Description
Structure probing data (2A3 and DMS) for a 177-nucleotide construct. It was measured as part of the RMDB library OK1LIB. Conditions: 150 mM KOAc, 10 mM MgCl2 and 150 mM bicine (pH 8.5), 24 C. Reactivities are given for positions 27 through 126.
[RMDB]
RNA sequence: GGGAACGACUCGAGUAGAGUCGAAAAUAAGGCACUGGCUUCCCGUCGUGCCUUCUACAUUUCAGCCUCACGCGUGAAAGAGCACGUCCAGAUAUACACCGACGGGAAAGAGGACUGGGUUAAGGCGGACCCGACAUGUAUUCGUACAUGUCGGGUCAAAAGAAACAACAACAACAAC
Reactivity to 2A3 in 0.01 (KOAc 150mM, MgCl2 10mM, bicine 150mM(pH8.5), 24C), signal-to-noise 3, nucleotides 027 to 126: u190a010a020g000g020c020a030c100u090g010g040c030u050u020c000c000c000g000u000c010g040u040g010c010c000u020u000c030u050a070c000a130u010u090u050c030a010g040c020c000u060c000a060c050g050c010g010u020g080a200a070a020g070a050g020c010a000c050g070u080c000c010a020g070a150u100a020u100a150c050a060c080c080g080a090c060g000g020g030a020a030a010g080a010g000g030a020c030u010g000g080g000u060u110a040a000g050g000c050g010
Reactivity to DMS in 0.01 (KOAc 150mM, MgCl2 10mM, bicine 150mM(pH8.5), 24C), signal-to-noise 2, nucleotides 027 to 126: u030a120a020g000g000c040a100c000u050g020g000c080u010u010c050c030c020g000u060c030g000u040g000c040c030u000u000c060u000a060c110a100u000u000u030c130a130g060c060c010u000c000a000c180g000c000g000u030g000a080a050a090g030a150g030c020a060c100g010u000c100c000a000g000a080u010a030u010a110c190a150c060c140g000a040c010g000g000g000a020a020a040g010a150g000g000a050c040u000g000g010g060u050u040a080a010g000g040c110g000
For 2A3, 1,500 sequencing reads were counted.